[RMDB]
RNA sequence: GGGAACGACUCGAGUAGAGUCGAAAACCUUGGGCGGGACGCUAAUGCGAAUGUGGCACAUCCAGGCCGCAGGGUGGAUAAGAAUUUACAGGAAAUGGACACCCACAUUUGCCUGCUCAGGAGAUCAGGGGUUCGAUACCUUCGGGUAUCGAAUCCCAAAAGAAACAACAACAACAAC
Reactivity to DMS in 0.01 (KOAc 150mM, MgCl2 10mM, bicine 150mM(pH8.5), 24C), signal-to-noise 2, nucleotides 027 to 126: c030c000u040u010g020g020g090c020g000g030g010a140c140g040c050u030a000a040u000g000c090g010a150a290u000g040u000g000g030c000a040c060a300u100c150c070a120g000g010c020c020g000c000a040g000g000g000u050g000g000a130u030a110a020g020a040a150u050u000u010a060c030a110g040g030a020a000a120u020g000g040a300c010a040c120c000c000a220c050a070u000u000u000g000c000c000u010g020c000u000c070a010g010g000a060g000a010u000c180a120
Reactivity to 2A3 in 0.01 (KOAc 150mM, MgCl2 10mM, bicine 150mM(pH8.5), 24C), signal-to-noise 5, nucleotides 027 to 126: c000c000u020u020g010g000g010c030g010g010g040a060c070g060c200u200a100a010u160g050c060g080a130a060u080g000u010g010g000c030a020c010a200u120c100c080a110g120g000c020c010g000c010a010g000g000g030u060g000g000a090u190a170a070g070a060a200u100u120u180a150c140a130g150g120a060a090a070u060g050g020a040c010a020c000c020c000a020c000a000u050u060u040g040c000c000u000g000c000u000c010a010g050g040a080g010a080u190c120a070